[RMDB]
An RNA of 177 nucleotides, treated with DMS and read out base by base. Conditions: 150 mM KOAc, 10 mM MgCl2 and 150 mM bicine (pH 8.5), 24 C. The DMS profile rests on 1,994 reads.
RNA sequence: GGGAACGACUCGAGUAGAGUCGAAAAGUGUUUGUGAGGUAGUAGUACCAGUCGUUGAUUGUGUAGUAGUCUGAGUAGUCUGUAAUGACUUUGAAAGUAUAAGUACUCCCGCUAAUGUAACAACACCCACGGGAUGAAACUUCGGUUUCAUCCCGUGAAAAGAAACAACAACAACAAC
Reactivity to DMS in 0.01 (KOAc 150mM, MgCl2 10mM, bicine 150mM(pH8.5), 24C), signal-to-noise 2, nucleotides 027 to 126: g020u000g000u000u000u000g000u000g010a110g000g030u000a040g010u000a080g040u020a060c020c020a080g030u000c090g020u000u010g010a110u010u010g030u020g010u010a050g020u000a080g000u010c020u000g010a150g020u000a050g030u000c020u000g000u000a070a130u010g010a060c000u000u000u010g010a120a070a080g000u000a090u010a040a080g010u000a060c030u000c030c010c010g000c050u000a050a070u000g020u010a090a040c080a030a070c200a090c060c070